An RNA of 177 nucleotides, treated with 2A3 and DMS and read out base by base. The data come from the RNA Mapping Database (RMDB), library OK1LIB. DMS adducts were read by reverse transcription with MarathonRT. In probing experiments dimethyl sulfate is read out at A N1 and C N3, which are open when not base-paired.
RNA sequence: GGGAACGACUCGAGUAGAGUCGAAAACGGGGUACGAGAUUGUAAAGGCUCACUGGGUCAACAGUCCCGUACCCAUAGACUACAUUUGUACUAGGGACCCAGUGAGCCUUUAGUACGAUGUGGUCAAGGAACUCGAAGAUUUCGAUCUUUGAGUUCCAAAAGAAACAACAACAACAAC
Reactivity to 2A3 in 0.01 (KOAc 150mM, MgCl2 10mM, bicine 150mM(pH8.5), 24C), signal-to-noise 8, nucleotides 027 to 126: c040g000g000g000g000u000a000c000g000a010g010a050u020u020g030u070a040a050a040g000g000c000u010c060a200c120u050g000g000g010u040c020a020a010c000a030g010u000c000c000c000g000u000a010c000c000c000a000u070a010g000a000c000u010a000c010a030u030u060u300g010u000a010c010u030a040g120g040g040a040c000c000c000a090g050u070g060a000g000c000c000u000u010u000a000g000u000a000c000g000a010u000g000u010g000g000u010c010a020a050
Reactivity to DMS in 0.01 (KOAc 150mM, MgCl2 10mM, bicine 150mM(pH8.5), 24C), signal-to-noise 5, nucleotides 027 to 126: c080g010g000g000g010u010a000c000g010a070g000a030u000u010g000u000a010a030a020g000g010c000u000c010a090c070u000g010g000g010u010c030a100a080c040a030g000u000c000c020c010g010u000a010c000c010c000a010u010a020g010a040c010u000a020c040a040u010u010u020g040u010a010c010u000a090g010g000g000a050c010c000c000a040g030u020g000a010g000c000c000u000u000u000a010g000u000a010c020g000a020u010g000u000g000g010u000c020a150a140